[RMDB]
RNA sequence: GGGAACGACUCGAGUAGAGUCGAAAAGUCGGCUCGGGUCCCGUCGGUCUGGUGGGGGCAAGCGCCGUCACGGCCGGCCUCGGGGCAGCGACUGCAGCACUGGCGUUUGGCCCGACACGGGAAGCCCGCCCCUAAUAGGAUUCGUCCUAUUAGGGGCAAAAGAAACAACAACAACAAC
Reactivity to DMS in 0.01 (KOAc 150mM, MgCl2 10mM, bicine 150mM(pH8.5), 24C), signal-to-noise 3, nucleotides 027 to 126: g010u000c040g000g000c070u000c030g020g010g000u000c020c110c040g010u000c030g020g020u000c030u000g050g050u000g000g000g000g000g010c010a140a130g010c220g020c000c010g010u000c050a080c050g000g000c010c040g010g000c030c110u000c060g000g000g000g010c070a060g010c040g010a060c050u000g020c050a110g000c140a160c060u010g020g010c050g020u000u010u000g000g010c010c010c010g000a050c220a100c070g000g000g000a100a140g000c020c010c050
Reactivity to 2A3 in 0.01 (KOAc 150mM, MgCl2 10mM, bicine 150mM(pH8.5), 24C), signal-to-noise 2, nucleotides 027 to 126: g060u020c030g040g030c060u010c020g000g010g040u030c020c020c000g000u020c060g000g050u030c050u210g190g020u070g050g010g030g010g000c050a160a060g070c050g000c130c020g090u050c010a020c010g030g000c010c030g020g030c030c010u010c030g060g000g060g000c000a020g060c010g060a080c020u070g000c050a040g080c040a010c040u060g010g010c000g000u100u160u160g000g020c000c000c000g020a010c040a030c150g020g000g030a060a010g070c020c000c000
Record summary: Structure probing data (DMS and 2A3) for a 177-nucleotide construct. For DMS, 3,792 sequencing reads were counted. The reactions ran in a buffer of 150 mM KOAc, 10 mM MgCl2 and 150 mM bicine (pH 8.5), at 24 C.